[RMDB]
An RNA of 177 nucleotides, treated with 2A3 and DMS and read out base by base. As a SHAPE reagent, 2A3 marks flexible, mostly unpaired nucleotides at the ribose 2'-OH. Conditions: 150 mM KOAc, 10 mM MgCl2 and 150 mM bicine (pH 8.5), 24 C. DMS adducts were read by reverse transcription with MarathonRT. For 2A3 the reverse transcriptase was SuperScript II with manganese.
RNA sequence: GGGAACGACUCGAGUAGAGUCGAAAAGACUGCCAGGCUUUCGGUACGAAUGAGGAUUUUCCUGUCGUCAACACAUAUUCCUGUGGGAUAUGGAACCGUUACGGAAUAGGCAAACGACCUAUUCCCUACAUCCUAACGCUUUCGAGCGUUAGGAUGUAAAAGAAACAACAACAACAAC
Reactivity to 2A3 in 0.01 (KOAc 150mM, MgCl2 10mM, bicine 150mM(pH8.5), 24C), signal-to-noise 5, nucleotides 027 to 126: g060a010c060u090g010c010c010a030g020g130c080u040u050u070c030g000g010u000a000c010g040a030a020u220g100a130g020g040a050u140u050u140u180c000c000u010g000u030c000g010u020c030a030a040c010a020c000a020u000a010u020u070c010c010u130g140u300g070g020g010a010u010a000u030g000g000a020a020c000c000g020u040u070a050c050g000g030a010a010u030a020g010g000c070a160a180a020c110g180a250c020c000u000a020u000u010c000c000c000u010
Reactivity to DMS in 0.01 (KOAc 150mM, MgCl2 10mM, bicine 150mM(pH8.5), 24C), signal-to-noise 1, nucleotides 027 to 126: g000a140c160u000g030c070c030a240g010g000c030u000u000u000c000g000g060u010a020c010g000a000a030u000g000a020g000g000a160u000u000u000u000c000c060u010g000u000c010g010u000c170a030a050c170a050c000a020u050a000u000u000c000c050u070g000u100g090g000g020a010u000a020u000g020g000a050a000c100c010g030u010u000a070c220g020g000a060a010u000a030g000g010c000a120a080a120c300g000a050c000c000u000a010u000u000c020c000c140u010